[RMDB]
RNA sequence: GGGAACGACUCGAGUAGAGUCGAAAAAGGUGAAACUUUCACAUUUAUUGGGGAGUACACUCGAGGAGUGGAAGGCGGGGAGACGGGGAUCCCGGGCUUACCCACGGGAACUGCUGGGUUCCCCUGAGAAGAAACUAGUUCGCUAGUUUCAAAAGAAACAACAACAACAAC
Reactivity to 2A3 in 0.01 (KOAc 150mM, MgCl2 10mM, bicine 150mM(pH8.5), 24C), signal-to-noise 9, nucleotides 027 to 129: a000g120g000u070g040a100a080a050c070u060u150u050c060a060c020a180u100u150u210a230u160u180g010g000g000g000a010g020u060a050c040a010c040u020c020g060a070g020g020a030g010u090g020g030a030a010g020g010c020g000g010g000g000a020g010a020c040g000g000g000g010a000u010c000c000c000g000g010g010c020u040u090a120c010c000c010a040c060g010g010g010a020a030c050u100g020c040u090g050g000g000u020u030c000c000c000c010u070g060a090g030a150a020
Reactivity to DMS in 0.01 (KOAc 150mM, MgCl2 10mM, bicine 150mM(pH8.5), 24C), signal-to-noise 7, nucleotides 027 to 129: a100g060g040u000g000a030a080a110c160u050u040u000c040a030c030a080u030u010u020a080u060u040g000g020g020g000a060g030u020a110c070a070c000u020c030g040a060g040g010a020g000u060g000g010a070a040g000g040c020g000g000g000g000a050g000a060c080g020g010g020g000a010u020c000c020c010g000g000g000c020u000u060a120c070c020c020a120c160g020g000g010a050a070c120u000g020c050u000g000g000g000u000u000c000c000c000c040u020g010a080g000a070a080